[RMDB]
RNA sequence: GGGAACGACUCGAGUAGAGUCGAAAAGGUAUCUUCGCGCACGUUGACGCGGGUAAGACCACUACCACUGAGCGUAUCCUGAAGCUGACUGGUAAAAUCCACCGUCUGGGCGAAGUACAUGACGGCAGCCGUUUUAGUCAUUCGUGACUAAAACGGCAAAAGAAACAACAACAACAAC
Reactivity to DMS in 0.01 (KOAc 150mM, MgCl2 10mM, bicine 150mM(pH8.5), 24C), signal-to-noise 2, nucleotides 027 to 126: g000g000u000a070u010c020u000u000c030g010c010g020c100a140c300g000u020u020g010a060c010g030c110g000g000g010u000a020a120g000a140c090c080a130c090u000a050c020c000a090c080u000g000a030g040c030g000u010a100u010c050c040u000g020a040a220g020c020u000g020a020c050u010g020g030u000a060a090a080a060u010c070c060a120c040c010g000u000c080u000g000g020g000c050g000a010a070g000u000a040c030a020u000g020a070c060g000g010c190a140
Reactivity to 2A3 in 0.01 (KOAc 150mM, MgCl2 10mM, bicine 150mM(pH8.5), 24C), signal-to-noise 1, nucleotides 027 to 126: g060g000u080a040u040c010u020u100c010g000c000g010c000a060c120g170u150u220g120a110c040g000c060g040g020g000u020a150a050g050a030c030c010a040c020u040a020c000c000a060c030u040g100a010g030c000g050u050a110u140c000c010u060g050a060a000g030c030u000g080a080c010u040g040g030u090a110a070a000a020u030c030c020a040c000c050g010u000c010u090g010g000g000c060g040a050a000g050u100a010c030a040u100g020a030c050g000g080c060a030